[RMDB]
RNA sequence: GGGAACGACUCGAGUAGAGUCGAAAACGGAUUAGGCGUGGAGGCGAAAGUCACCCUCCUCGCAUCUCAAGUUCGUGCUUGCGACUUACACGUAGGGCGAGGGGUGGGCGAAAGUUGCCAUGAGACCAAAAUAUGUAGUUCUUCGGAACUACAUAAAGACAAAAGUACCUUUCGAGGUACUUUUGUCAAAAGAAACAACAACAACAAC
Reactivity to 2A3 in 0.01 (KOAc 150mM, MgCl2 10mM, bicine 150mM(pH8.5), 24C), signal-to-noise 4, nucleotides 027 to 156: c040g060g000a090u120u160a130g040g010c020g000u010g040g010a050g020g020c050g040a130a070a010g050u070c060a140c030c010c010u020c010c010u030c010g000c010a170u020c030u000c020a050a040g020u220u080c010g030u100g130c150u170u300g030c030g030a010c010u070u070a040c130a010c160g080u140a050g020g010g010c040g010a050g020g010g020g050u220g010g000g000c040g040a020a040a020g020u040u060g010c020c000a030u060g040a020g020a070c040c030a060a030a050a060u080a000u000g000u000a000g000u000u000c010u010u020c190g070g000a000a000c000u000a010c000a000u000a000a010a000
Reactivity to DMS in 0.01 (KOAc 150mM, MgCl2 10mM, bicine 150mM(pH8.5), 24C), signal-to-noise 1, nucleotides 027 to 156: c050g000g010a110u010u010a070g000g020c010g050u010g000g020a030g000g020c070g000a070a090a190g000u000c060a060c060c000c000u000c010c000u000c030g000c020a110u000c020u000c070a100a160g000u010u000c000g020u000g010c100u010u010g000c040g000a130c110u000u000a050c030a070c090g020u000a130g000g030g030c050g010a030g000g030g000g000u000g020g010g010c020g000a040a090a300g030u010u000g000c010c040a000u000g000a090g010a180c040c040a010a080a060a190u000a000u000g000u000a010g000u000u040c000u060u010c300g060g010a010a020c000u010a000c010a000u000a010a030a150
Annotation
The data come from the RNA Mapping Database (RMDB), library M2RFPK. This 207-nucleotide RNA was probed chemically with 2A3 and DMS. For DMS, 2,553 sequencing reads were counted. High DMS reactivity at an A or C suggests that its Watson-Crick edge is free. For 2A3 the reverse transcriptase was SuperScript II with manganese. The RNA was probed in 150 mM KOAc, 10 mM MgCl2 and 150 mM bicine (pH 8.5) at 24 C. Values cover nucleotides 27 to 156. The 2A3 profile rests on 2,241 reads.